Annotation:
An RNA of 177 nucleotides, treated with DMS and read out base by base.
[RMDB]
RNA sequence: GGGAACGACUCGAGUAGAGUCGAAAAGAUAUGGACGCUGAACUACAGCCGCCCAGCAACAGCAUUGCCUUACUCGGAAACGAGUAAGGCAAUGACAUGCUGUAACAAGCUGCAGCGUCCUAAGUCACUUUAAAACACGGUUCGCCGUGUUUUAAAGAAAAGAAACAACAACAACAAC
Reactivity to DMS in 0.01 (KOAc 150mM, MgCl2 10mM, bicine 150mM(pH8.5), 24C), signal-to-noise 3, nucleotides 027 to 126: g000a010u010a300u010g000g010a000c000g030c020u020g000a200a050c120u020a300c000a020g000c000c030g030c300c260c000a040g000c010a050a080c300a120g010c010a000u000u000g010c000c000u000u000a000c000u000c000g000g010a080a110a160c000g000a000g000u000a000a000g000g000c000a000a000u000g000a070c090a240u000g010c010u000g010u000a040a100c220a300a040g000c000u000g000c000a010g020c000g010u000c000c000u000a000a090g010u000c040a190
For DMS the reverse transcriptase was MarathonRT. It was measured as part of the RMDB library TTRINS.